This 177-nucleotide RNA was probed chemically with 2A3 and DMS. The 2A3 profile rests on 4,724 reads.

RNA sequence: GGGAACGACUCGAGUAGAGUCGAAAACUCAUUACUGCCACACUAGAAUACUCAGAGGGGUUGGGGGAUGCCAAACGGACUUUGUGCAUUUCUAUGCAACUUAGUGGGCUCCAGCCAGAAAGUGAGGAUCAGAUAAUUGGUUCGCCAAUUAUCUGAUAAAAGAAACAACAACAACAAC
Reactivity to 2A3 in 0.01 (KOAc 150mM, MgCl2 10mM, bicine 150mM(pH8.5), 24C), signal-to-noise 4, nucleotides 027 to 126: c010u000c020a060u040u130a040c040u050g030c030c010a040c010a010c020u030a050g070a150a100u140a160c040u040c070a030g040a060g140g090g010g000u040u010g020g000g000g010g050a040u110g040c010c020a080a080a070c080g100g080a020c020u010u040u050g000u020g020c010a000u060u170u020c060u140a030u060g000c020a090a190c130u030u020a010g020u040g050g000g020c010u000c010c000a020g040c000c010a040g090a070a080a010g040u030g010a030g010g040
Reactivity to DMS in 0.01 (KOAc 150mM, MgCl2 10mM, bicine 150mM(pH8.5), 24C), signal-to-noise 4, nucleotides 027 to 126: c010u010c020a110u000u000a090c080u000g010c030c020a060c040a050c040u000a080g010a110a080u010a090c060u000c040a080g010a120g000g010g010g030u000u000g020g010g000g000g010a060u010g010c020c020a040a060a110c200g010g010a140c040u000u010u000g010u000g000c000a000u000u010u010c160u010a060u000g010c030a030a080c030u000u000a020g020u000g010g000g010c020u010c020c040a050g010c010c030a080g010a040a060a080g010u000g010a060g010g010
For 2A3 the reverse transcriptase was SuperScript II with manganese. It was measured as part of the RMDB library OK2TRN. For DMS, 5,484 sequencing reads were counted. The RNA was probed in 150 mM KOAc, 10 mM MgCl2 and 150 mM bicine (pH 8.5) at 24 C.